[RMDB]
RNA sequence: GGGAACGACUCGAGUAGAGUCGAAAAUCAUUGGCUUCGCUGCGCGCUGCGUUGCCUAGGCUUCAGAUGCUUCGUACUGUUGCCAACGUUGCAAUUUCCAAACCCUAAUGCGAAAGUGUGCAAACAAAAGAUUCGUAGUUUUCGAACUACGAAUCUUAAAAGAAACAACAACAACAAC
Reactivity to 2A3 in 0.01 (KOAc 150mM, MgCl2 10mM, bicine 150mM(pH8.5), 24C), signal-to-noise 4, nucleotides 027 to 126: u120c030a040u040u120g010g000c000u020u020c030g000c040u100g000c030g000c010g000c040u010g000c000g030u020u020g000c000c000u030a070g030g000c000u010u000c020a040g030a220u100g070c060u080u140c070g050u070a060c010u020g040u060u020g000c020c000a050a020c050g030u030u060g020c030a060a080u030u080u000c030c000a070a030a160c030c000c010u120a130a080u110g030c040g080a120a020a040g030u040g010u010g020c020a070a050a000c040a020a140
Reactivity to DMS in 0.01 (KOAc 150mM, MgCl2 10mM, bicine 150mM(pH8.5), 24C), signal-to-noise 4, nucleotides 027 to 126: u010c160a080u010u000g010g010c030u000u000c020g010c020u010g010c030g010c110g030c040u010g010c070g000u000u010g010c030c030u000a110g010g020c060u000u000c040a030g020a120u010g000c100u010u000c100g020u010a080c040u000g000u000u000g010c010c030a050a090c140g010u000u010g010c030a050a090u000u000u010c030c020a060a070a140c050c020c020u010a090a110u000g000c050g000a090a050a050g010u000g000u000g010c040a110a070a090c160a050a070